The record gives the reactivity of an RNA of 177 nucleotides to 2A3 and DMS. The data come from the RNA Mapping Database (RMDB), library TTRDES. The DMS profile rests on 7,982 reads.
RNA sequence: GGGAACGACUCGAGUAGAGUCGAAAAGAUAUGGACCCACGGAGCUUUUGACGGAGUCUGGUCGGAAACGACCAGUCUCCGAUAAGCUCGUGGGUCCUAAGUCAAAAUCGCCUGUUCGCAGGCGAAACUAGGUGAAAUAGUUCGCUAUUUCACCUAGAAAAGAAACAACAACAACAAC
Reactivity to 2A3 in 0.01 (KOAc 150mM, MgCl2 10mM, bicine 150mM(pH8.5), 24C), signal-to-noise 6, nucleotides 027 to 126: g000a010u020a010u090g000g000a000c000c050c020a000c070g270g110a090g150c040u280u300u300u300g300a200c080g000g010a020g000u000c010u010g010g000u000c000g000g010a010a020a030c000g000a000c000c000a000g000u000c000u010c000c010g000a000u010a010a000g000c000u010c000g000u000g010g030g000u000c000c000u000a000a000g000u000c000a000a000a000a230u030c000g000c010c000u020g040u060u080c300g000c090a000g000g000c000g000a010a000a010
Reactivity to DMS in 0.01 (KOAc 150mM, MgCl2 10mM, bicine 150mM(pH8.5), 24C), signal-to-noise 3, nucleotides 027 to 126: g010a020u000a170u010g000g000a020c000c000c000a010c010g030g020a040g030c000u000u000u010u000g020a280c100g020g010a030g010u000c000u000g000g020u000c000g010g000a040a020a110c010g020a010c000c010a010g000u000c000u000c000c000g020a010u010a010a010g020c000u000c000g020u000g000g000g000u000c010c000u000a000a060g000u000c010a110a070a150a210u000c010g010c000c000u000g010u000u020c240g030c010a000g000g010c000g000a010a030a180